An RNA of 177 nucleotides, treated with 2A3 and read out base by base. Reactivities are given for positions 27 through 126. The 2A3 profile rests on 469 reads. The RNA was probed in 150 mM KOAc, 10 mM MgCl2 and 150 mM bicine (pH 8.5) at 24 C.
RNA sequence: GGGAACGACUCGAGUAGAGUCGAAAAUACGGGCACGUUGAUCUGCUGUAACGGGAUAGCGUGUUCAUCUUGUGGAGUGGCCAGACGCGUCCCUGUCGCGCGUCUCGUUAUUGUAACAGCAUGAUUAUCCUGACCAGCAGUUCGCUGCUGGUCAGGAAAAAGAAACAACAACAACAAC
Reactivity to 2A3 in 0.01 (KOAc 150mM, MgCl2 10mM, bicine 150mM(pH8.5), 24C), signal-to-noise 1, nucleotides 027 to 126: u140a000c000g010g000g000c020a020c020g090u130u140g080a090u020c050u120g180c050u010g300u160a030a060c170g020g000g000a000u000a030g030c040g030u000g100u180u040c030a030u030c000u160u130g040u000g080g010a100g030u000g000g000c040c010a000g040a120c070g040c040g130u040c000c000c010u010g000u000c060g000c040g000c000g000u000c030u000c000g030u010u000a010u030u040g100u090a070a070c020a020g040c060a000u190g030a190u070u160a000